[RMDB]
RNA sequence: GGGAACGACUCGAGUAGAGUCGAAAAGAUAUGGAUUCGGAGCUGCGAAGAACUAUGUGAAGAAGGCAGUACAUCGGAAACGAUGUACUGCUGUAAAGCAUAGGGAGCAGUGACGAAUCCUAAGUCAGUAUAUCCAAUAGUUCGCUAUUGGAUAUACAAAAGAAACAACAACAACAAC
Reactivity to DMS in 0.01 (KOAc 150mM, MgCl2 10mM, bicine 150mM(pH8.5), 24C), signal-to-noise 8, nucleotides 027 to 126: g000a020u000a220u000g010g000a010u010u000c000g020g010a300g010c000u000g000c010g020a140a160g010a160a250c020u000a010u010g000u000g020a090a190g020a250a300g000g000c000a010g000u000a000c000a010u000c000g000g000a040a040a070c000g020a010u000g010u000a000c000u000g000c000u010g000u010a010a120a300g000c000a000u000a000g010g010g010a070g000c000a000g010u000g010a200c000g000a010a000u000c000c000u000a000a040g000u000c020a120
Reactivity to 2A3 in 0.01 (KOAc 150mM, MgCl2 10mM, bicine 150mM(pH8.5), 24C), signal-to-noise 5, nucleotides 027 to 126: g030a000u050a030u110g000g000a000u010u000c010g010g000a050g000c010u020g020c040g280a300a030g010a050a010c010u000a010u010g060u040g050a180a300g130a070a090g110g000c010a000g010u000a000c000a000u000c010g020g020a040a040a040c010g000a010u000g000u010a000c000u000g000c000u000g000u010a020a000a000g020c000a000u000a010g020g000g000a020g000c000a000g010u010g030a000c000g000a000a000u000c000c000u000a030a010g010u000c030a000
Structure probing data (DMS and 2A3) for a 177-nucleotide construct.
DMS adducts were read by reverse transcription with MarathonRT.
It was measured as part of the RMDB library TTRINS.
The RNA was probed in 150 mM KOAc, 10 mM MgCl2 and 150 mM bicine (pH 8.5) at 24 C.